Source: RMDB library 15KREP, as collected in RNAgym. The record gives the reactivity of an RNA of 177 nucleotides to 2A3 and DMS. The DMS profile rests on 839 reads. Values are in units of 0.01, from 0 to 300, in steps of 10.
RNA sequence: GGGAACGACUCGAGUAGAGUCGAAAAUUGCAGGCGUGUCCAUACUUAGCACAAUGACUAAUCGCCAGUACCAUCAGAAAAUGCUUAAGUCCAUGGCUGCAACUCGUGGAGCGACUUGCGUCAUUGGGGAUGAUUUUAUCUUCGGAUAAAAUCAUCCAAAAGAAACAACAACAACAAC
Reactivity to 2A3 in 0.01 (KOAc 150mM, MgCl2 10mM, bicine 150mM(pH8.5), 24C), signal-to-noise 2, nucleotides 027 to 126: u070u080g000c010a010g040g010c030g030u060g110u040c010c000a000u040a090c010u030u070a030g010c040a010c010a090a090u080g030a010c020u060a040a060u090c010g030c040c020a000g000u020a050c020c030a030u100c020a020g150a040a110a000a030u050g040c000u130u090a070a000g010u000c050c010a030u040g010g010c020u030g020c010a040a060c030u030c020g040u060g080g030a040g060c020g080a100c020u000u020g000c000g030u040c020a040u060u160g090g010
Reactivity to DMS in 0.01 (KOAc 150mM, MgCl2 10mM, bicine 150mM(pH8.5), 24C), signal-to-noise 1, nucleotides 027 to 126: u020u020g020c140a060g000g010c030g000u000g010u000c060c100a090u000a060c110u000u010a080g020c020a040c120a050a050u010g010a050c070u020a120a080u000c010g020c060c020a080g020u000a120c070c020a030u000c180a070g030a080a050a030a120u000g020c020u000u000a040a120g010u000c050c090a020u000g010g000c020u010g000c000a010a090c140u010c020g000u040g040g010a260g030c010g010a010c130u020u000g000c050g020u000c050a040u010u000g020g020